[RMDB]
RNA sequence: GGGAACGACUCGAGUAGAGUCGAAAAUUGUUAGGUUAACAGUUAAGAAUGGUAACCCUCAUAUGAUUAUUCAGUGUAAUCCUGUACCUGGGAAUAUUAAAAUGAUAAAGAUAAAAUCUGUAAUGCUUUUUACUUGUUUGAUAGGCUGAUGAAAUAACGGAUCAAUUAGAUUCGUCUAAUUGAUCCGAAAAGAAACAACAACAACAAC
Reactivity to 2A3 in 0.01 (KOAc 150mM, MgCl2 10mM, bicine 150mM(pH8.5), 24C), signal-to-noise 2, nucleotides 027 to 156: u070u060g030u050u070a050g010g040u010u070a050a010c030a030g020u040u110a210a080g010a080a070u050g000g000u060a060a060c000c010c020u050c030a110u250a070u130g030a030u050u180a040u150u090c030a020g030u000g010u180a030a060u030c020c000u040g030u020a130c000c000u000g010g000g070a010a090u110a090u130u100a070a080a060a090u060g020a000u030a050a110a060g050a030u050a130a070a010a060u040c020u060g080u080a000a060u050g040c000u060u080u030u060u070a030c010u020u060g090u110u080u070g030a050u080a050g060g000c010u000g030a080u060g050a050a030a040u170a080a020
Reactivity to DMS in 0.01 (KOAc 150mM, MgCl2 10mM, bicine 150mM(pH8.5), 24C), signal-to-noise 1, nucleotides 027 to 156: u000u000g010u000u010a060g010g040u000u000a060a120c030a230g010u000u000a110a170g010a070a090u000g010g000u000a040a120c020c000c040u000c040a100u000a100u000g030a110u010u010a010u000u000c070a070g060u000g030u010a060a120u000c020c070u000g020u010a050c040c020u000g030g070g030a070a090u010a050u000u000a030a070a110a120u010g000a150u000a080a080a100g000a100u000a050a010a050a300u000c020u000g000u010a070a080u010g000c020u020u020u000u000u000a080c010u000u000g040u000u000u000g030a120u000a060g060g050c020u000g000a090u010g010a070a020a100u000a060a170